Chemical mapping of a 177-nucleotide RNA with DMS and 2A3. For 2A3, 6,899 sequencing reads were counted. For 2A3 the reverse transcriptase was SuperScript II with manganese.
RNA sequence: GGGAACGACUCGAGUAGAGUCGAAAAGGGACUUUCCGCUGGGGACUUUCCAGGGAGGCGUGGCCUGGGCGGGACUGGGGAGUGGCGAGCCCUCAGAUCCUGCAUAUAAGCAGCUGCUUUUUGCCUGAUGGACACAGAUAUUCGUAUCUGUGUCCAUAAAAGAAACAACAACAACAAC
Reactivity to DMS in 0.01 (KOAc 150mM, MgCl2 10mM, bicine 150mM(pH8.5), 24C), signal-to-noise 3, nucleotides 027 to 126: g010g010g000a110c070u000u000u020c050c040g000c030u000g000g000g000g020a120c140u010u000u010c020c020a100g010g000g010a090g010g010c040g020u010g000g000c020c010u020g000g010g010c030g010g020g000a020c020u010g000g030g000g020a080g010u000g020g010c090g020a100g020c080c000c000u000c020a020g000a070u010c010c010u000g000c000a040u040a050u020a100a110g020c050a070g020c090u020g020c010u000u000u010u010u010g010c040c030u000g000
Reactivity to 2A3 in 0.01 (KOAc 150mM, MgCl2 10mM, bicine 150mM(pH8.5), 24C), signal-to-noise 6, nucleotides 027 to 126: g030g000g030a080c030u070u090u030c040c030g040c070u040g020g010g030g080a160c040u130u150u030c030c030a040g030g030g030a050g010g030c050g040u080g020g020c000c010u030g010g030g010c040g020g000g000a010c020u010g010g000g000g020a130g020u050g040g060c090g010a030g010c000c010c000u010c000a020g020a070u020c000c000u000g010c020a020u100a020u010a110a010g000c020a000g010c020u090g000c020u080u050u030u100u110g030c010c020u040g030

The reactions ran in a buffer of 150 mM KOAc, 10 mM MgCl2 and 150 mM bicine (pH 8.5), at 24 C.